[RMDB]
RNA sequence: GGGAACGACUCGAGUAGAGUCGAAAACGUGGCCCCUACUACUACCUGGACAAAUGUCCAUUACCCGUAUUACAUACCAUAUAUAGUACAGAAGCAUGUUCGGGGACUAACAUCUAUCCGCUGGAGGCUAUUGUUAGGCGUUCGCGCCUAACAAUAGAAAAGAAACAACAACAACAAC
Reactivity to DMS in 0.01 (KOAc 150mM, MgCl2 10mM, bicine 150mM(pH8.5), 24C), signal-to-noise 4, nucleotides 027 to 126: c120g000u000g000g000c020c000c000c040u020a090c090u010a090c050u010a040c030c040u000g020g010a060c070a110a070a080u060g010u020c010c040a120u030u020a090c050c040c040g040u030a020u010u020a080c050a110u000a070c130c060a130u030a090u010a090u030a060g000u000a100c050a030g020a110a060g010c110a040u030g000u010u000c130g010g000g000g030a050c070u000a050a070c080a030u030c040u000a050u010c050c030g020c090u000g000g010a080g010g000
Reactivity to 2A3 in 0.01 (KOAc 150mM, MgCl2 10mM, bicine 150mM(pH8.5), 24C), signal-to-noise 1, nucleotides 027 to 126: c060g030u090g080g010c000c010c010c000u020a020c010u000a020c000u020a050c040c030u040g010g000a000c020a050a300a090u300g000u020c010c010a020u020u120a060c000c020c000g030u060a080u060u150a050c070a070u070a040c020c050a040u080a020u030a010u040a160g150u040a060c040a070g080a120a010g070c070a060u060g030u020u070c020g000g000g020g020a010c030u040a030a040c010a040u050c020u080a050u030c010c020g040c070u070g010g070a040g070g000